[RMDB]
RNA sequence: GGGAACGACUCGAGUAGAGUCGAAAACAACACGUCCUCGUCGUACAGAGUGGUUACAUGUGUCACCACAUAUCCAAGCUUGGGUACACGGGCUUGACCCAACCCCUUGGGCGGAUGGUGGCACAUGAAAAGAAGUAACACUUCGGUGUUACUUCAAGUUGCAAUCGAUGUUCGCAUCGAUUGCAACAAAAGAAACAACAACAACAAC
Reactivity to 2A3 in 0.01 (KOAc 150mM, MgCl2 10mM, bicine 150mM(pH8.5), 24C), signal-to-noise 1, nucleotides 027 to 156: c060a000a050c030a040c140g130u090c050c040u060c040g130u020c020g060u170a110c060a080g030a050g010u130g020g050u210u140a020c010a000u000g000u000g000u020c000a010c010c020a120c030a190u300a000u040c000c000a010a030g030c120u010u020g000g000g010u040a000c030a050c070g000g010g050c030u300u300g240a300c000c000c000a000a050c000c010c000c000u000u000g020g000g040c000g030g000a030u000g010g030u000g000g010c020a000c000a000u000g000a000a000a000a020g000a000a000g000u000a000a000c000a000c000u000u080c160g040g000u000g000u000u000a000c000u000u010c000a000a000